This 177-nucleotide RNA was probed chemically with 2A3 and DMS. High DMS reactivity at an A or C suggests that its Watson-Crick edge is free. The reactions ran in a buffer of 150 mM KOAc, 10 mM MgCl2 and 150 mM bicine (pH 8.5), at 24 C. Values are in units of 0.01, from 0 to 300, in steps of 10. The DMS profile rests on 84,162 reads. For 2A3, 142,118 sequencing reads were counted.
[RMDB]
RNA sequence: GGGAACGACUCGAGUAGAGUCGAAAAUAACAGUGUCCUGGCGUGAAAACGUCAGGCAACUAGCAAUGACUGUAUGCUAGUUGCAUUGUGUGAAAACACAAUGAUGCUGUUUAACAGUCAUUGAUACGAACUUGACGUAUUUCGAUAUGUCGAGUUCAAAAGAAACAACAACAACAAC
Reactivity to 2A3 in 0.01 (KOAc 150mM, MgCl2 10mM, bicine 150mM(pH8.5), 24C), signal-to-noise 9, nucleotides 027 to 126: u070a000a000c000a000g000u000g010u010c000c000u000g000g000c000g000u020g060a070a020a010a010c000g010u000c000a000g000g000c000a000a000c000u000a000g000c000a010a020u050g000a000c000u000g000u010a010u040g000c000u000a000g000u000u000g000c000a000u000u000g000u000g010u010g100a060a010a040a010c000a000c000a000a000u000g000a000u000g000c000u000g000u000u000u020a010a000c000a000g000u000c000a000u030u220g080a040u040a060c080
Reactivity to DMS in 0.01 (KOAc 150mM, MgCl2 10mM, bicine 150mM(pH8.5), 24C), signal-to-noise 9, nucleotides 027 to 126: u030a010a000c000a010g020u000g000u000c000c000u000g010g000c000g000u000g000a130a050a140a010c000g010u000c000a000g000g010c000a000a000c000u000a000g000c000a070a100u010g010a010c000u000g010u000a180u000g000c000u000a000g000u000u000g000c000a040u000u000g010u000g010u010g000a130a070a150a020c010a010c000a000a000u000g010a010u000g020c000u000g000u000u000u000a040a020c000a000g000u000c000a160u040u020g010a120u030a100c220